RNA sequence: GGGAACGACUCGAGUAGAGUCGAAAACCCAAAGCGUUCGCGCUUUGGGAAAGAAAAAACGAGCGAAAAGAAUGAUGUGGACGCUCGUAAAAACCACAUCAAAAAGUCAACGGUUCGCCGUUGACAAGCUGUGAAAUAAGUUCGCUUAUUUCACAGCAAAAGAAACAACAACAACAAC
Reactivity to DMS in 0.01 (KOAc 150mM, MgCl2 10mM, bicine 150mM(pH8.5), 24C), signal-to-noise 2, nucleotides 027 to 126: c000c000c000a010a030a000g030c010g060u000u010c190g080c000g020c000u000u000u010g020g000g020a010a040a060g000a010a040a050a050a060a100c050g010a000g010c010g000a090a060a140a060g010a160a070u000g000a030u000g030u000g000g010a250c080g000c020u010c000g000u010a020a040a030a100a040c020c010a030c020a000u000c030a070a110a090a100a100g000u000c010a000a010c010g000g010u000u030c240g020c000c000g000u000u000g000a000c000a030a050
Reactivity to 2A3 in 0.01 (KOAc 150mM, MgCl2 10mM, bicine 150mM(pH8.5), 24C), signal-to-noise 3, nucleotides 027 to 126: c000c000c000a000a010a000g010c010g020u040u110c190g010c010g000c070u020u000u000g010g000g020a080a140a040g010a020a130a010a010a000a000c030g010a010g010c040g090a070a020a080a110g120a110a160u160g000a010u020g000u010g010g030a060c160g000c010u010c020g020u020a050a000a000a000a000c010c000a000c000a010u010c000a050a050a040a030a010g000u000c000a000a000c000g000g020u030u060c210g020c070c000g000u000u000g000a000c000a000a000